Notes:
Structure probing data (2A3 and DMS) for a 170-nucleotide construct. It was measured as part of the RMDB library 15KLIB. The DMS profile rests on 10,535 reads. For 2A3, 6,521 sequencing reads were counted.
RNA sequence: GGGAACGACUCGAGUAGAGUCGAAAAAGGAGAGGCAAGAGAUCCCGAGGGGGCUUCAGGCUAAAGAGUGGACGAUUUUCGGGGAAGGUCUCCCAAGAAGAACCAGGAACACCUCAAGAAGAGGAGAUGAUCCCGUUGUUCGCAACGGGAAAAAGAAACAACAACAACAAC
Reactivity to 2A3 in 0.01 (KOAc 150mM, MgCl2 10mM, bicine 150mM(pH8.5), 24C), signal-to-noise 2, nucleotides 027 to 129: a000g060g020a030g000a030g000g000c040a030a010g030a030g030a100u020c020c010c020g000a040g000g000g000g000g000c020u070u030c020a030g000g010c000u090a110a080a000g080a040g010u080g050g000a020c030g030a070u000u010u080u080c030g000g000g000g000a000a020g020g010u000c000u000c010c010c010a000a000g030a010a000g020a010a060c020c040a000g010g010a010a020c020a020c020c000u010c020a010a050g040a080a010g010a060g000g000a030g040a030u080g010a020
Reactivity to DMS in 0.01 (KOAc 150mM, MgCl2 10mM, bicine 150mM(pH8.5), 24C), signal-to-noise 3, nucleotides 027 to 129: a060g060g020a060g000a000g060g000c070a090a030g000a090g090a080u000c060c000c000g030a120g050g020g010g020g080c300u020u060c090a060g000g040c080u080a080a070a060g020a080g070u000g020g040a030c000g030a090u010u000u010u000c100g060g000g040g000a000a060g000g020u000c030u040c030c040c020a090a070g000a050a060g030a040a130c020c070a000g000g000a000a000c060a090c090c060u030c020a030a080g020a070a060g040a070g040g000a060g010a090u070g010a020